[RMDB]
RNA sequence: GGGAACGACUCGAGUAGAGUCGAAAAGGAACUAUGUUCUGACCUGAAGCCUCCACAGGACCGCGAAAGCGAUCGGAAACGAAUGAGCAUAGUUCAGAGCUGAAGGAGGCACGGCUCAAAAUAAAAACGAGCAUGAUGUGUUCGCACAUCAUGUUCGAAAAGAAACAACAACAACAAC
Reactivity to DMS in 0.01 (KOAc 150mM, MgCl2 10mM, bicine 150mM(pH8.5), 24C), signal-to-noise 4, nucleotides 027 to 126: g000g010a000a010c000u000a010u000g010u000u000c000u000g010a120c000c000u010g000a100a160g020c010c010u000c000c000a300c020a000g000g010a020c030c000g000c020g000a110a080a170g000c010g000a050u010c010g000g010a070a060a090c020g020a020a090u000g000a000g000c020a000u000a000g010u000u000c000a040g000a010g000c000u010g000a140a120g010g020a020g000g040c000a240c000g010g000c010u000c010a120a060a070a060u040a020a080a070a060a110
Reactivity to 2A3 in 0.01 (KOAc 150mM, MgCl2 10mM, bicine 150mM(pH8.5), 24C), signal-to-noise 3, nucleotides 027 to 126: g100g000a000a000c000u000a000u000g000u000u000c010u010g020a010c000c000u000g020a070a000g000c000c000u000c000c000a010c000a010g000g000a000c010c010g010c000g040a060a020a020g010c000g010a040u050c010g020g050a030a010a020c020g010a020a030u020g000a000g000c000a000u000a000g000u000u000c010a010g000a000g000c000u010g010a100a020g010g000a000g000g010c010a010c000g000g000c000u000c000a020a030a010a000u070a010a030a010a000a010
Chemical mapping of a 177-nucleotide RNA with DMS and 2A3. For 2A3, 28,676 sequencing reads were counted. 2A3 adducts were read by reverse transcription with SuperScript II with manganese. The data come from the RNA Mapping Database (RMDB), library OK1LIB. The reactions ran in a buffer of 150 mM KOAc, 10 mM MgCl2 and 150 mM bicine (pH 8.5), at 24 C.